[RMDB]
RNA sequence: GGGAACGACUCGAGUAGAGUCGAAAAGCGGUUUGGUGAAAAUGUCACAUCCCAGUGGAGAUGUUGAGGCUUGUAUGGUUCAGGUUACCUGCGGUAGCAUGACUCUUAAUGGUCUUUGGCUUGACAAUAGGCCCGCAGUUCGCUGCGGGCAAAAGAAACAACAACAACAAC
Reactivity to DMS in 0.01 (KOAc 150mM, MgCl2 10mM, bicine 150mM(pH8.5), 24C), signal-to-noise 3, nucleotides 027 to 129: g030c160g000g000u020u040u010g010g060u040g010a000a050a080a030u010g000u000c060a090c020a090u000c010c010c020a080g000u060g010g040a150g040a040u000g150u010u010g040a010g070g000c000u020u020g010u000a050u010g000g000u000u000c130a060g000g000u080u000a060c180c040u090g030c130g040g010u030a060g040c120a050u020g000a090c040u010c080u090u190a150a200u030g010g000u040c070u000u000u000g000g020c070u030u020g000a000c140a110a030u090a090g000
Reactivity to 2A3 in 0.01 (KOAc 150mM, MgCl2 10mM, bicine 150mM(pH8.5), 24C), signal-to-noise 1, nucleotides 027 to 129: g060c040g070g000u130u000u000g110g010u000g000a000a030a080a060u090g050u060c020a000c000a030u000c000c000c000a040g020u060g130g000a140g000a010u070g080u090u120g020a000g000g000c060u020u000g020u000a230u010g000g000u010u050c070a000g000g000u060u000a010c000c000u000g090c080g020g000u000a000g010c010a010u100g040a050c000u000c030u190u200a050a020u100g000g000u000c000u010u060u060g030g040c010u040u030g020a000c000a140a150u050a070g000